RNA sequence: GGGAACGACUCGAGUAGAGUCGAAAAUGCUGGUUAGGGAUUGUAGAGAUGCAGUCCCCAGUGUCGCAAAUUAGAUUGUAUCGGGCUUCUCAUGGUUACGUGCGACAGAUACUGGUGAGGCGAAGAAGGGUUAAAAUAACUUCGGUUAUUUUAACCCAAAAGAAACAACAACAACAAC
Reactivity to 2A3 in 0.01 (KOAc 150mM, MgCl2 10mM, bicine 150mM(pH8.5), 24C), signal-to-noise 3, nucleotides 027 to 126: u130g000c030u040g010g170u210u170a180g040g010g030a020u000u000g010u030a030g000a000g020a160u040g010c000a000g000u000c000c000c000c000a010g000u000g020u040c020g000c100a120a080a060u180u100a070g080a150u080u120g020u040a010u060c050g010g000g000c020u050u000c030u020c040a070u080g020g000u020u050a050c050g000u080g030c010g020a010c010a030g040a020u090a090c000u000g020g020u080g040a100g020g070c080g000a030a030g040a120a060
Reactivity to DMS in 0.01 (KOAc 150mM, MgCl2 10mM, bicine 150mM(pH8.5), 24C), signal-to-noise 3, nucleotides 027 to 126: u030g020c010u000g000g010u010u040a100g010g000g020a020u000u000g020u010a020g010a210g010a160u010g010c000a020g000u000c010c000c000c080a020g010u010g020u000c040g010c020a050a080a100u020u030a080g000a080u010u010g000u000a100u030c020g000g000g010c040u000u010c040u000c040a040u030g000g020u000u010a070c120g030u000g000c010g010a030c020a050g000a090u010a010c050u000g000g010u000g010a090g010g000c070g000a080a080g030a080a130